[RMDB]
RNA sequence: GGGAACGACUCGAGUAGAGUCGAAAAGAUAUGGAUUGGCGAAGAACCAUUAGGUUACGUUCGGAAACGAACGAACCAACGAUGGGGAGCCAAUCCUAAGUCAAACAUCUCCGUUCGCGGAGAUGAAGAUUCCAUUUCAGUUCGCUGAAAUGGAAUCAAAAGAAACAACAACAACAAC
Reactivity to 2A3 in 0.01 (KOAc 150mM, MgCl2 10mM, bicine 150mM(pH8.5), 24C), signal-to-noise 3, nucleotides 027 to 126: g020a010u040a050u150g000g000a000u000u020g000g000c030g110a300a010g020a070a060c020c020a040u010u050a110g040g010u010u040a300c000g020u000u000c000g000g030a040a030a050c000g010a000a000c000g000a000a000c010c010a000a020c180g010a030u060g000g000g010g060a010g010c010c000a000a010u010c010c000u000a020a000g020u000c020a040a090a060c000a000u020c000u000c010c000g010u030u070c300g000c010g090g000a000g000a000u010g000a010a000
Reactivity to DMS in 0.01 (KOAc 150mM, MgCl2 10mM, bicine 150mM(pH8.5), 24C), signal-to-noise 3, nucleotides 027 to 126: g010a070u020a300u020g000g000a000u000u000g010g050c000g000a090a130g010a160a170c000c000a000u000u000a190g000g020u000u000a070c020g040u010u000c000g000g000a100a020a200c000g010a000a000c000g000a030a010c000c000a110a090c270g040a030u000g000g000g010g000a090g000c000c000a020a000u000c000c000u010a030a080g020u000c030a140a110a300c010a000u000c010u000c000c000g030u000u010c220g030c020g000g000a020g000a000u000g000a060a100
Record summary:
Chemical mapping of a 177-nucleotide RNA with 2A3 and DMS. Source: RMDB library TTRDEL, as collected in RNAgym. The reactions ran in a buffer of 150 mM KOAc, 10 mM MgCl2 and 150 mM bicine (pH 8.5), at 24 C. For DMS the reverse transcriptase was MarathonRT. For 2A3, 6,387 sequencing reads were counted. 2A3 adducts were read by reverse transcription with SuperScript II with manganese. The DMS profile rests on 2,154 reads.